Structure probing data (2A3 and DMS) for a 177-nucleotide construct. High 2A3 reactivity points to a flexible backbone, as in loops and unpaired stretches. Values cover nucleotides 27 to 126. The DMS profile rests on 2,789 reads. For 2A3 the reverse transcriptase was SuperScript II with manganese. It was measured as part of the RMDB library OK2TST. Values are in units of 0.01, from 0 to 300, in steps of 10. The reactions ran in a buffer of 150 mM KOAc, 10 mM MgCl2 and 150 mM bicine (pH 8.5), at 24 C.
[RMDB]
RNA sequence: GGGAACGACUCGAGUAGAGUCGAAAACUCAUUUUGAUGCUUCAAAAAUAGCACAUCCCCCGUAUUACUGGGAUUUGCUAUUCUUGGGAUUACUUCAAGAACAUCCUUGUGUUACUGGUUUGGAUGCUACAUUGCCCUGAUUCGUCAGGGCAAUGUAAAAAGAAACAACAACAACAAC
Reactivity to 2A3 in 0.01 (KOAc 150mM, MgCl2 10mM, bicine 150mM(pH8.5), 24C), signal-to-noise 2, nucleotides 027 to 126: c000u010c040a080u160u180u050u090g060a070u090g020c010u030u040c030a070a030a010a050a050u050a010g070c010a000c010a040u000c090c010c010c020c030g040u160a120u140u060a040c010u000g000g010g010a000u010u010u050g000c000u010a020u020u030c010u010u000g010g010g030a030u110u190a070c040u040u040c050a060a000g010a030a010c010a030u020c000c000u070u030g080u010g010u070u080a060c050u040g090g140u130u100u070g010g000a020u040g050c030
Reactivity to DMS in 0.01 (KOAc 150mM, MgCl2 10mM, bicine 150mM(pH8.5), 24C), signal-to-noise 2, nucleotides 027 to 126: c020u030c020a180u010u020u000u000g020a040u010g000c060u000u000c030a010a040a020a020a020u000a000g000c020a040c050a030u000c010c000c080c190c160g010u010a120u010u010a060c100u000g000g000g000a010u000u010u000g000c060u010a020u010u000c040u000u000g010g000g000a210u000u000a100c110u000u000c030a020a020g020a070a160c040a040u000c010c020u010u000g000u000g000u010u020a070c140u020g010g000u000u000u000g000g020a020u000g010c190